An RNA of 170 nucleotides, treated with DMS and 2A3 and read out base by base. For DMS, 34,265 sequencing reads were counted. 2A3 adducts were read by reverse transcription with SuperScript II with manganese. For DMS the reverse transcriptase was MarathonRT. Conditions: 150 mM KOAc, 10 mM MgCl2 and 150 mM bicine (pH 8.5), 24 C.
RNA sequence: GGGAACGACUCGAGUAGAGUCGAAAAACGUUGAUAUGGAUUUACUCCGAGGAGACGAACUACCACGAACAGGGGAAACUCUACCCGUGGCGUCUCCGUUUGACGAGUAAGUCCUAAGUGAACAUGCAAGCCAUGAACUUCGGUUCAUGGAAAAGAAACAACAACAACAAC
Reactivity to DMS in 0.01 (KOAc 150mM, MgCl2 10mM, bicine 150mM(pH8.5), 24C), signal-to-noise 8, nucleotides 027 to 129: a070c120g000u030u030g050a040u000a030u000g000g030a030u010u040u000a000c030u020c020c000g010a070g030g010a060g020a030c030g010a050a030c100u060a300c040c000a000c000g010a040a200c120a180g020g010g010g000a070a000a050c000u000c010u010a130c230c210c000g020u020g010g000c050g040u000c020u020c000c000g020u010u000u010g020a180c300g000a000g000u000a020a030g000u030c000c000u000a020a040g000u000g000a030a010c040a080u070g040c200a090a070g000
Reactivity to 2A3 in 0.01 (KOAc 150mM, MgCl2 10mM, bicine 150mM(pH8.5), 24C), signal-to-noise 8, nucleotides 027 to 129: a000c100g000u010u040g150a010u000a000u020g000g000a000u000u000u010a000c000u000c000c000g020a040g000g000a000g040a000c010g000a020a010c080u230a060c120c000a000c000g020a050a010c020a060g000g000g000g000a000a000a000c000u010c010u010a030c010c000c000g000u000g010g000c000g000u000c000u000c010c000g000u020u040u030g000a000c000g000a000g000u000a000a000g010u000c000c000u000a000a000g000u000g030a010a010c020a030u230g060c080a150a050g060